[RMDB]
RNA sequence: GGGAACGACUCGAGUAGAGUCGAAAAACGAGGUACGCCUCGAAAAUAUGACCGGUGUCAUAGCCUCUAGCACACAGAGGUCGCGUGGGUUCAACUCCCCCCCCUUUCCGAGGGUAUCGGAAACCAAAAAACACAAUUUGGUUCGCCAAAUUGUGAACGUACUCAAAUGCUUCGGCAUUUGAGUACGAAAAGAAACAACAACAACAAC
Reactivity to 2A3 in 0.01 (KOAc 150mM, MgCl2 10mM, bicine 150mM(pH8.5), 24C), signal-to-noise 2, nucleotides 027 to 156: a000c010g000a000g000g000u050a020c110g050c010c000u010c000g040a040a080a000a030u090a070u050g010a020c030c050g110g080u200g050u150c010a020u030a030g000c000c010u000c010u050a110g110c110a080c000a000c010a160g010a000g000g010u020c020g010c010g040u120g060g020g000u130u160c040a070a050c080u070c050c000c000c010c000c010c000c000u010u020u000c000c000g000a000g010g030g010u090a010u010c000g010g000a010a000a000c020c000a000a040a050a010a090a000c000a000c000a000a000u000u000u000g020g000u030u010c090g000c050c000a000a000a000u000u010g000u000g000a000a000